Description
Source: RMDB library OK3TST, as collected in RNAgym. Structure probing data (2A3 and DMS) for a 207-nucleotide construct. The DMS profile rests on 1,797 reads. The 2A3 profile rests on 2,048 reads.
[RMDB]
RNA sequence: GGGAACGACUCGAGUAGAGUCGAAAAGUUGCAGUAAGAAAUCAUCAUACUACCAGACAUUUGAUGAUGAUGUAGUAGGCGAACGAAUCAGACCUAAGAAAAAUGUCUGAUGACUCGUCCUGCUGCAUACAUAAUCCAUGCCUCUCUGAGUGGUGUGGAGUCGAAAUACUUUCGAGUAUUUCGACUCAAAAGAAACAACAACAACAAC
Reactivity to 2A3 in 0.01 (KOAc 150mM, MgCl2 10mM, bicine 150mM(pH8.5), 24C), signal-to-noise 3, nucleotides 027 to 156: g070u070u070g030c080a060g060u230a150a060g130a100a140a060u110c050a020u000c000a010u030a040c010u010a030c050c000a010g020a070c030a050u090u160u270g020a020u020g000a010u000g000a000u000g020u000a000g010u000a000g000g010c010g010a030a020c040g030a050a020u010c000a000g010a020c010c050u130a160a130g160a190a130a070a020a020u110g000u000c000u010g000a010u010g010a030c010u010c010g160u290c010c000u000g010c010u000g000c000a000u010a010c000a010u030a030a010u010c030c010a000u020g020c050c040u160c010u030c020u070g050a060g100u030g000g020u010g000u020g030
Reactivity to DMS in 0.01 (KOAc 150mM, MgCl2 10mM, bicine 150mM(pH8.5), 24C), signal-to-noise 1, nucleotides 027 to 156: g030u000u000g040c000a110g010u010a040a140g010a120a100a050u020c020a020u010c010a100u000a070c010u010a200c070c070a110g080a050c020a030u010u000u010g000a030u020g000a020u010g010a040u010g030u000a090g010u020a040g040g020c010g040a050a060c020g020a300a050u000c020a010g000a000c010c250u010a070a200g020a000a120a070a110a160u000g020u000c000u020g030a020u010g000a090c050u000c000g010u020c000c000u040g050c020u000g040c010a020u000a050c020a050u000a030a020u000c000c070a040u020g000c000c000u000c020u010c040u000g010a190g040u000g010g010u000g030u000g000

The RNA was probed in 150 mM KOAc, 10 mM MgCl2 and 150 mM bicine (pH 8.5) at 24 C.